[RMDB]
RNA sequence: GGGAACGACUCGAGUAGAGUCGAAAAAGAUCAUGAUACCUUACGAGGUAUCAUGAUCAAGUUCAUGAUAAGUAACAUUUCUUCAAUUUGACCUGAUGUGUAUUGAAGAAAACCAGCAUCUGAGGAAGUUGGUUUUUCGUUUCGACGAAAAACCAACAAAAGAAACAACAACAACAAC
Reactivity to 2A3 in 0.01 (KOAc 150mM, MgCl2 10mM, bicine 150mM(pH8.5), 24C), signal-to-noise 2, nucleotides 027 to 126: a010g010a000u000c000a000u000g000a000u000a000c000c000u040u000a060c180g190a000g000g000u040a000u000c020a000u000g000a000u000c000a000a000g000u000u050c110a000u130g040a040u040a100a150g080u120a180a020c060a110u000u000u000c000u010u030c000a020a020u060u010u300g180a130c000c000u280g130a090u160g280u020g000u130a000u000u010g000a000a000g000a080a000a000a060c000c000a050g000c000a040u030c010u080g120a050g050g040a020a020

The data come from the RNA Mapping Database (RMDB), library RFM100. Structure probing data (2A3) for a 177-nucleotide construct. The reactions ran in a buffer of 150 mM KOAc, 10 mM MgCl2 and 150 mM bicine (pH 8.5), at 24 C. The 2A3 profile rests on 667 reads.